Conditions: 150 mM KOAc, 10 mM MgCl2 and 150 mM bicine (pH 8.5), 24 C. Chemical mapping of a 177-nucleotide RNA with 2A3. Source: RMDB library OK1LIB, as collected in RNAgym. 2A3 adducts were read by reverse transcription with SuperScript II with manganese. The 2A3 profile rests on 345 reads.
RNA sequence: GGGAACGACUCGAGUAGAGUCGAAAAAUUUGCAGCAAUAACUUUAUCCAAAAUUUCUACUGCCUCAUUAAGGUGGUCCAGCUGAGUCAAUGCAACAGCUGUAUUGACCUUUGUUCGGUAUAAAAGCGCACCUACCUCACUUCGGUGAGGUAGGUGCAAAAGAAACAACAACAACAAC
Reactivity to 2A3 in 0.01 (KOAc 150mM, MgCl2 10mM, bicine 150mM(pH8.5), 24C), signal-to-noise 1, nucleotides 027 to 126: a000u150u250u130g020c070a040g000c000a140a190u300a040a040c030u240u140u000a210u170c040c040a000a060a140a300u000u160u110c000u030a060c080u050g000c040c000u030c050a010u030u060a000a010g000g000u040g040g000u040c000c000a000g000c000u060g040a040g210u140c080a210a140u230g120c000a180a170c050a150g000c000u000g040u000a000u000u000g180a070c000c000u020u030u030g080u000u020c000g000g040u040a030u000a180a180a060a000g190c080